[RMDB]
Source: RMDB library OK1LIB, as collected in RNAgym. Structure probing data (2A3 and DMS) for a 177-nucleotide construct. Values are in units of 0.01, from 0 to 300, in steps of 10. The RNA was probed in 150 mM KOAc, 10 mM MgCl2 and 150 mM bicine (pH 8.5) at 24 C. In probing experiments dimethyl sulfate is read out at A N1 and C N3, which are open when not base-paired. Reactivities are given for positions 27 through 126. For 2A3 the reverse transcriptase was SuperScript II with manganese.
RNA sequence: GGGAACGACUCGAGUAGAGUCGAAAAUCUCUGACUUAUCUCCGUCGAGGAUCUAUCAAACAGAUAAGAUUGAGAGUUGAUCCAGGAUUCAUUUUUGACGCCCUCGCUGAGGUAAAUGUCAGUCAGCCUCUAUCUCCAAAUUCGUUUGGAGAUAGAGAAAAGAAACAACAACAACAAC
Reactivity to 2A3 in 0.01 (KOAc 150mM, MgCl2 10mM, bicine 150mM(pH8.5), 24C), signal-to-noise 9, nucleotides 027 to 126: u020c020u000c000u010g010a010c010u010u010a000u020c000u000c010c030g180u300c100g050a010g010g010a040u000c020u050a070u040c040a080a070a170c060a080g100a140u140a240a070g050a110u080u140g100a140g010a030g180u090u190g060a070u020c030c030a030g030g050a060u090u080c020a080u050u070u060u060u100g020a020c030g050c010c000c000u000c000g010c010u020g010a000g000g010u020a050a070a060u140g010u010c010a000g040u020c020a020g060c020
Reactivity to DMS in 0.01 (KOAc 150mM, MgCl2 10mM, bicine 150mM(pH8.5), 24C), signal-to-noise 4, nucleotides 027 to 126: u020c030u020c000u000g000a020c010u000u010a020u000c000u000c000c030g020u060c020g010a060g000g000a150u010c060u030a130u010c030a040a070a080c240a070g010a070u010a080a050g000a110u010u010g000a120g010a070g020u040u020g010a090u010c020c070a080g030g010a110u000u000c140a080u020u000u010u010u000g010a020c210g020c160c000c040u000c020g010c020u000g010a020g000g010u000a000a020a080u040g000u000c010a010g000u010c130a100g000c210